[RMDB]
RNA sequence: GGGAACGACUCGAGUAGAGUCGAAAAACGAGGUACGCCUCGAAAAUAAGACCGGUGUCAUAGCCUCUAGCACACAGAGGUCGCGUGGGUUCAACUCCCCCCCUUUUCCGAGGGUAUCGGAAACCAAAAAACACAAUUUGGUUCGCCAAAUUGUGAACUAUCCUAUACCGUUCGCGGUAUAGGAUAGAAAAGAAACAACAACAACAAC
Reactivity to DMS in 0.01 (KOAc 150mM, MgCl2 10mM, bicine 150mM(pH8.5), 24C), signal-to-noise 2, nucleotides 027 to 156: a070c030g000a090g030g040u000a070c220g010c060c000u010c010g010a050a040a090a110u010a110a120g010a110c030c040g030g050u000g000u000c050a100u000a130g010c030c010u000c040u010a220g010c050a090c050a120c070a150g010a070g030g000u000c030g020c120g030u000g000g000g000u010u010c080a080a300c080u000c010c000c000c000c000c010c010u010u010u000u010c020c030g000a010g000g040g000u000a060u000c020g010g000a030a080a100c140c060a010a000a060a080a080a180c000a020c010a010a010u000u000u000g010g020u000u010c300g040c020c000a030a010a020u000u030g020u000g010a020a080
Reactivity to 2A3 in 0.01 (KOAc 150mM, MgCl2 10mM, bicine 150mM(pH8.5), 24C), signal-to-noise 6, nucleotides 027 to 156: a000c010g000a000g010g010u040a030c180g070c020c000u020c020g030a140a080a010a040u100a080a000g020a020c010c060g080g020u070g090u160c060a070u070a070g010c020c010u010c020u050a060g070c090a040c010a010c020a160g020a010g010g010u020c010g000c020g050u120g080g030g010u090u170c060a060a100c080u040c000c000c000c000c000c000c000u020u070u010u000c000c000g000a000g010g000g010u070a020u000c000g000g000a000a000a010c010c010a020a010a010a040a070a020c000a000c000a000a000u000u000u000g020g010u020u050c150g040c050c000a000a000a000u000u000g000u000g000a000a010